Chemical mapping of a 177-nucleotide RNA with 2A3 and DMS. 2A3 adducts were read by reverse transcription with SuperScript II with manganese. The 2A3 profile rests on 1,159 reads.
RNA sequence: GGGAACGACUCGAGUAGAGUCGAAAAUUGUUGGAAUUAUGCUGAUUCCAUAAUCUAUUGCAAUGGAAGCCAUUGAUCCCCUUAUUGCAUUUGGAUUUAUGAAACCGGUAUAGAAGUCAUCUACCUCCAUGAUCCAGGAGUUCGCUCCUGGAUCAUGAAAAGAAACAACAACAACAAC
Reactivity to 2A3 in 0.01 (KOAc 150mM, MgCl2 10mM, bicine 150mM(pH8.5), 24C), signal-to-noise 3, nucleotides 027 to 126: u120u070g030u020u020g000g080a120a070u060u000a020u030g000c000u010g020a050u010u020c030c020a000u000a030a010u000c020u030a040u020u020g020c010a040a020u000g020g050a120a030g040c010c040a160u100u120g100a140u150c050c010c000c000u060u140a020u010u020g020c010a010u010u000u190g090g000a090u120u120u150a010u070g050a030a000a000c070c000g010g010u010a050u020a020g160a120a000g070u080c020a110u000c040u050a080c010c020u030c050
Reactivity to DMS in 0.01 (KOAc 150mM, MgCl2 10mM, bicine 150mM(pH8.5), 24C), signal-to-noise 1, nucleotides 027 to 126: u000u020g000u000u000g000g010a120a090u050u000a010u010g010c040u000g000a080u000u000c030c000a010u000a040a000u000c040u020a000u020u010g000c020a040a000u030g000g000a170a090g040c090c090a140u080u000g000a140u000c060c020c000c090u000u060a050u000u000g000c040a040u020u000u000g000g010a000u010u000u070a000u000g000a010a030a020c050c020g000g000u050a020u000a050g010a170a080g010u000c050a060u010c030u030a090c050c050u000c060